[RMDB]
RNA sequence: GGGAACGACUCGAGUAGAGUCGAAAAGACUAGCAUUUCCCUUUACGACACAAUAAAAUUAGAAACUAUUUCCAAUAGUAUUAUUUGCUAAAGAGCAACUUUAGGUUGCUGAAAAUGAUUUAUGGGUGAGUGUGUAGUAUUUCGAUACUACACACUCAAAAGAAACAACAACAACAAC
Reactivity to 2A3 in 0.01 (KOAc 150mM, MgCl2 10mM, bicine 150mM(pH8.5), 24C), signal-to-noise 5, nucleotides 027 to 126: g050a020c110u100a010g010c000a070u020u020u050c000c000c000u030u060u030a080c070g090a030c000a010c050a150a040u190a180a090a040a060u220u080a060g100a080a080a000c020u030a070u030u140u060c040c050a040a030u010a010g060u010a050u130u100a090u080u160u060g010c020u090a100a050a030g110a030g000c000a000a010c010u150u130u100a190g160g010u000u000g000c000u000g000a020a050a040a040u120g040a040u030u090u190a100u130g080g000g030u070
Reactivity to DMS in 0.01 (KOAc 150mM, MgCl2 10mM, bicine 150mM(pH8.5), 24C), signal-to-noise 3, nucleotides 027 to 126: g010a100c050u010a060g000c080a060u010u020u000c010c010c000u010u000u010a080c100g040a110c060a050c150a110a070u020a020a050a070a150u020u030a090g000a080a040a050c030u000a030u010u000u050c100c110a030a060u000a010g000u010a070u000u000a040u010u010u000g020c040u010a050a100a080g000a050g000c010a020a010c000u000u020u020a060g040g020u010u000g000c000u000g000a050a040a020a060u020g010a090u020u000u000a050u010g010g010g040u000